[RMDB]
RNA sequence: GGGAACGACUCGAGUAGAGUCGAAAAUUUACCACCGACUCAGCAGCUUGCCUGCGUGGUAUCGAAAUUGAAGCCGAUGUGGUGCUGAAAGCAACCAAAGUUGACGGCGUGUUUACCGCUGAUCCGGGGUGUAGGAUGAAUUCGUUCAUCCUACACCAAAAGAAACAACAACAACAAC
Reactivity to 2A3 in 0.01 (KOAc 150mM, MgCl2 10mM, bicine 150mM(pH8.5), 24C), signal-to-noise 2, nucleotides 027 to 126: u020u010u060a060c020c000a000c000c040g060a030c020u000c080a030g000c010a030g020c030u120u220g020c020c010u070g000c050g020u030g010g050u030a060u120c070g040a120a020a100u130u140g070a100a010g000c000c020g020a040u080g050u060g110g030u080g010c020u090g110a130a080a040g000c030a070a080c010c020a110a070a040g110u170u180g130a060c000g000g020c020g000u010g020u020u140u050a090c040c000g000c030u010g020a100u040c030c020g000g090
Reactivity to DMS in 0.01 (KOAc 150mM, MgCl2 10mM, bicine 150mM(pH8.5), 24C), signal-to-noise 5, nucleotides 027 to 126: u000u010u000a140c030c000a180c030c060g010a070c090u010c050a070g020c020a050g010c060u000u010g030c090c010u000g010c060g020u000g000g000u000a060u010c100g020a050a060a130u000u010g000a100a270g010c010c020g000a090u000g020u000g010g020u000g010c040u010g010a100a060a120g020c030a070a070c030c030a040a060a150g020u000u010g010a120c060g000g010c020g030u000g000u010u000u010a080c110c030g020c010u000g000a070u000c040c070g000g000

An RNA of 177 nucleotides, treated with 2A3 and DMS and read out base by base. The reactions ran in a buffer of 150 mM KOAc, 10 mM MgCl2 and 150 mM bicine (pH 8.5), at 24 C. For 2A3, 2,550 sequencing reads were counted. The DMS profile rests on 4,949 reads. For DMS the reverse transcriptase was MarathonRT.